[RMDB]
RNA sequence: GGGAACGACUCGAGUAGAGUCGAAAAGAUAUGGAGUCGACCAAGGGAGCUGUGGUCGGAAACGACCAUACAGCUUUGAUCUUGGACUCCUAAGUCAAACCGUUGCAACCUUCGGGUUGCAACGGAACAGUGAAGCUUAGUUCGCUAAGCUUCACUGAAAAGAAACAACAACAACAAC
Reactivity to DMS in 0.01 (KOAc 150mM, MgCl2 10mM, bicine 150mM(pH8.5), 24C), signal-to-noise 2, nucleotides 027 to 126: g010a030u010a110u020g000g000a010g000u000c230g000a240c100c010a010a010g000g000g010a000g030c010u000g010u000g000g000u010c010g010g000a020a020a090c000g010a030c000c020a130u000a090c040a020g010c000u000u000u010g000a070u010c020u010u000g000g000a100c000u000c000c000u000a020a130g000u000c010a160a130a200c000c000g020u000u000g000c000a000a020c000c020u000u020c300g020g000g010u000u000g000c000a000a000c010g010g000a020a070
Reactivity to 2A3 in 0.01 (KOAc 150mM, MgCl2 10mM, bicine 150mM(pH8.5), 24C), signal-to-noise 2, nucleotides 027 to 126: g010a010u020a020u070g000g000a010g040u080c160g280a160c050c000a000a010g030g010g000a010g000c000u010g000u020g020g000u010c000g000g000a010a000a000c000g010a010c010c020a030u220a190c030a010g070c000u230u170u010g000a010u000c000u010u010g000g000a000c000u010c000c010u000a020a020g010u010c030a060a070a130c010c020g000u010u010g000c000a020a000c020c000u080u160c300g100g000g000u010u000g000c010a000a000c000g000g000a000a020